[RMDB]
RNA sequence: GGGAACGACUCGAGUAGAGUCGAAAACAAUUGAGCGUCGCACACACACAGACUAAGUCUGACACUGACAGAGCCUAAUCCGCUCUGUCAGUGUGCGAGAUAUCGUUCUUAAUGUGAGCAGAGGAAAGUGAAACAUUCAGUUCGCUGAAUGUUUCACAAAAGAAACAACAACAACAAC
Reactivity to 2A3 in 0.01 (KOAc 150mM, MgCl2 10mM, bicine 150mM(pH8.5), 24C), signal-to-noise 3, nucleotides 027 to 126: c040a030a130u120u210g040a050g050c040g050u030c030g020c010a010c010a000c000a000c000a000c010a070g000a010c020u160a270a040g020u010c010u020g050a030c000a000c010u010g000a010c000a000g000a000g010c000c000u010a010a010u020c000c010g000c020u000c000u000g000u000c010a000g000u000g000u000g000c020g050a020g010a010u120a030u110c040g040u100u050c020u010u100a160a130u080g020u040g040a040g010c060a040g060a050g080g110a110a040a040
Reactivity to DMS in 0.01 (KOAc 150mM, MgCl2 10mM, bicine 150mM(pH8.5), 24C), signal-to-noise 4, nucleotides 027 to 126: c040a100a100u000u000g010a090g000c070g000u000c030g000c040a070c060a040c100a100c100a180c160a020g010a000c020u000a100a150g010u000c010u000g030a060c050a010c030u000g000a000c010a000g010a020g000c000c010u020a090a070u010c300c300g010c010u000c000u000g000u000c000a000g000u000g000u000g010c060g010a050g000a080u000a170u000c070g010u000u000c010u000u010a180a120u000g000u000g000a080g000c010a120g000a100g000g020a040a070a070
About this RNA: Source: RMDB library M2PK90, as collected in RNAgym. The record gives the reactivity of an RNA of 177 nucleotides to 2A3 and DMS. The DMS profile rests on 2,500 reads. The reactions ran in a buffer of 150 mM KOAc, 10 mM MgCl2 and 150 mM bicine (pH 8.5), at 24 C.